[RMDB]
An RNA of 177 nucleotides, treated with DMS and 2A3 and read out base by base.
DMS adducts were read by reverse transcription with MarathonRT.
It was measured as part of the RMDB libraries RFM100 and RFMREP.
For 2A3 the reverse transcriptase was SuperScript II with manganese.

RNA sequence: GGGAACGACUCGAGUAGAGUCGAAAACUGCGGUUCAGUUCUUGUCCGCCGGGCAAGCCAGUCCCGCGGGGCGAAUUGGUCUCGGAACUUAACCCUAAGUAUACCUUUGGUUCUGAAAAGUCUUGCGGAUGUAUUCCAAGUUCGCUUGGAAUACAUCAAAAGAAACAACAACAACAAC
Reactivity to DMS in 0.01 (KOAc 150mM, MgCl2 10mM, bicine 150mM(pH8.5), 24C), signal-to-noise 5, nucleotides 027 to 126: c020u000g010c260g010g000u000u010c040a070g000u010u010c030u000u010g010u000c010c010g020c120c130g010g000g010c050a070a100g010c300c100a090g000u020c020c010c060g010c030g000g000g000g000c100g010a050a120u000u000g010g000u000c010u030c050g000g000a080a100c030u000u000a070a090c050c020c060u030a080a060g010u000a090u010a100c070c040u000u010u000g020g000u020u000c050u000g000a050a070a110a080g000u000c010u000u000g000c290g010
Reactivity to 2A3 in 0.01 (KOAc 150mM, MgCl2 10mM, bicine 150mM(pH8.5), 24C), signal-to-noise 5, nucleotides 027 to 126: c020u030g010c030g030g010u030u010c020a030g000u010u030c020u050u150g070u030c010c030g030c070c040g050g000g010c040a050a040g050c020c050a050g040u100c000c000c000g010c010g010g000g000g000c040g060a100a110u130u110g130g000u020c030u030c070g020g010a030a010c010u020u030a040a040c020c000c000u030a070a010g060u040a050u060a170c010c000u080u080u150g090g000u070u030c030u050g070a110a070a030a040g070u020c020u040u060g040c090g110